[RMDB]
RNA sequence: GGGAACGACUCGAGUAGAGUCGAAAAGUUCUACACACGGAAAGACUCAUGGGACGGUUAUCUCGACGAUUUGGCUAUCGAUUUGGCUGCCGACACUUGACGACUACCAUGUUAAUGACGGUGCGGUUCUACAACUGUGCUUCGGCACAGUUGUAGAAAAAGAAACAACAACAACAAC
Reactivity to 2A3 in 0.01 (KOAc 150mM, MgCl2 10mM, bicine 150mM(pH8.5), 24C), signal-to-noise 3, nucleotides 027 to 126: g000u020u020c010u070a070c070a000c020a010c080g000g080a110a010a060g090a100c000u020c030a050u080g040g000g000a010c040g020g010u030u050a130u020c030u000c040g130a130c030g050a190u060u030u090g000g000c020u070a080u100c070g140a140u150u040u100g080g000c000u010g020c020c000g020a050c010a000c020u030u090g010a030c000g020a000c030u120a130c000c070a020u070g000u080u130a150a060u100g020a040c020g000g030u060g020c030g000g000u010
Reactivity to DMS in 0.01 (KOAc 150mM, MgCl2 10mM, bicine 150mM(pH8.5), 24C), signal-to-noise 1, nucleotides 027 to 126: g000u000u020c000u000a070c270a150c030a020c100g000g020a080a070a030g100a290c180u000c140a010u020g000g000g030a150c120g000g020u010u000a000u000c000u000c040g000a230c000g000a160u000u000u000g000g000c000u000a080u000c130g000a100u000u000u000g000g000c080u000g000c050c080g040a070c140a010c130u040u000g000a060c120g000a080c030u030a100c050c030a020u000g000u000u000a160a020u010g020a080c030g020g000u000g000c020g000g000u000